An RNA of 170 nucleotides, treated with 2A3 and DMS and read out base by base.

RNA sequence: GGGAACGACUCGAGUAGAGUCGAAAAGGUGGGGAUCGUCGGAAGGUAUCGUCCCAAUGACCAAGAGAAGGGAAGAAACGGAAGCCUUUCCCCUUGACGCCGGUGAAACUCUGGAAUAGGAAGAAGGAACGACUACUGUUCGCAGUAGUCAAAAGAAACAACAACAACAAC
Reactivity to 2A3 in 0.01 (KOAc 150mM, MgCl2 10mM, bicine 150mM(pH8.5), 24C), signal-to-noise 9, nucleotides 027 to 129: g060g010u100g010g020g000g010a030u040c030g080u010c010g060g020a020a010g040g010u090a070u180c060g060u050c020c010c020a020a080u150g050a050c030c020a060a000g020a000g010a040a040g010g010g010a020a030g020a030a060a010c060g020g030a030a010g000c000c000u010u040u020c020c010c000c000u030u110g030a040c050g010c030c020g000g000u100g030a090a030a020c020u010c020u040g010g000a030a010u030a050g020g000a010a010g010a020a020g020g010a040a020c060
Reactivity to DMS in 0.01 (KOAc 150mM, MgCl2 10mM, bicine 150mM(pH8.5), 24C), signal-to-noise 8, nucleotides 027 to 129: g010g030u020g020g000g000g020a040u020c070g040u010c050g040g000a090a030g000g000u040a020u030c080g020u040c040c010c070a090a070u040g030a080c060c060a070a050g020a060g000a070a070g010g010g000a030a020g000a030a050a060c110g000g000a070a030g010c050c010u000u000u000c010c020c010c130u020u020g000a090c160g000c070c000g000g000u050g010a050a040a060c040u020c010u000g000g010a050a030u030a050g000g000a020a010g010a010a010g010g010a070a090c150
The reactions ran in a buffer of 150 mM KOAc, 10 mM MgCl2 and 150 mM bicine (pH 8.5), at 24 C. The 2A3 profile rests on 66,612 reads. Reactivities are given for positions 27 through 129.